[RMDB]
RNA sequence: GGGAACGACUCGAGUAGAGUCGAAAAUCGAGAGUGAGUCUCCUCUCGCAAAUCAAGGCUCAAAACAAAAGUAAAUGCGAAUAACAUCGUAAAAUUUGCUCGUAAGGACGCUCUAGUAGCUGCCUAAUUAGCCUCUUACAGGUUCGAGCGUCUUCGGCUCUUUGUAGGACUUCGGUCCUACAAAGAGAAAAGAAACAACAACAACAAC
Reactivity to 2A3 in 0.01 (KOAc 150mM, MgCl2 10mM, bicine 150mM(pH8.5), 24C), signal-to-noise 4, nucleotides 027 to 156: u210c000g000a000g000a000g000u030g000a010g010u010c170u150c190c000u000c010u010c000g190c180a020a020a000u020c010a010a000g000g010c000u000c000a020a080a000a010c050a010a090a010a020g060u080a020a030a070u050g000c020g010a020a030u100a160a030c020a060u040c020g000u090a000a010a040a200u030u040u050g020c020u060c090g060u060a040a010g050g010a000c000g020c010u000c010u040a120g030u080a030g070c090u070g040c050c010u020a050a060u130u160a030g030c000c000u070c050u130u110a080c080a100g090g000u020u110c040g000a000g000c000g010u000c000u030u030c010g040g000
The record gives the reactivity of an RNA of 207 nucleotides to 2A3. The reactions ran in a buffer of 150 mM KOAc, 10 mM MgCl2 and 150 mM bicine (pH 8.5), at 24 C. It was measured as part of the RMDB library ARCHII. For 2A3, 2,193 sequencing reads were counted. Reactivities are given for positions 27 through 156. For 2A3 the reverse transcriptase was SuperScript II with manganese.